The record gives the reactivity of an RNA of 177 nucleotides to DMS and 2A3. The RNA was probed in 150 mM KOAc, 10 mM MgCl2 and 150 mM bicine (pH 8.5) at 24 C. For 2A3, 2,606 sequencing reads were counted. It was measured as part of the RMDB library TTRINS.

RNA sequence: GGGAACGACUCGAGUAGAGUCGAAAAGAUAUGGAUUACUACCCACCUACCUGAUCCGAAGAACUUGCUUAUCGGAAACGAUAAGCAAGGGAGGAUCUGCGUAGGAUAGUAGAGGUAAUCCUAAGUCCUAAUCGGAUAUCUUCGGAUAUCCGAUUAGAAAAGAAACAACAACAACAAC
Reactivity to DMS in 0.01 (KOAc 150mM, MgCl2 10mM, bicine 150mM(pH8.5), 24C), signal-to-noise 3, nucleotides 027 to 126: g000a150u000a180u000g000g000a010u000u000a010c020u000a270c100c040c050a110c000c010u000a010c010c000u000g000a000u000c000c000g010a100a210g030a220a300c000u000u010g000c030u000u000a010u000c000g020g000a090a090a210c010g010a000u000a040a000g000c010a010a000g000g000g000a110g010g000a010u000c000u000g000c260g020u010a030g000g000a070u020a040g020u000a030g010a300g030g000u000a000a010u000c000c000u000a100a130g000u000c030
Reactivity to 2A3 in 0.01 (KOAc 150mM, MgCl2 10mM, bicine 150mM(pH8.5), 24C), signal-to-noise 1, nucleotides 027 to 126: g070a050u140a150u300g020g000a020u020u010a040c000u090a090c060c030c010a120c000c010u020a000c000c000u010g000a000u000c000c020g200a300a030g030a030a000c000u010u030g000c000u050u000a020u010c000g070g000a130a150a020c010g010a000u010a000a020g010c000a010a030g000g000g000a040g010g000a010u000c000u000g010c160g030u020a010g000g020a020u110a000g000u090a080g040a060g030g100u000a000a000u000c000c020u060a190a000g230u060c040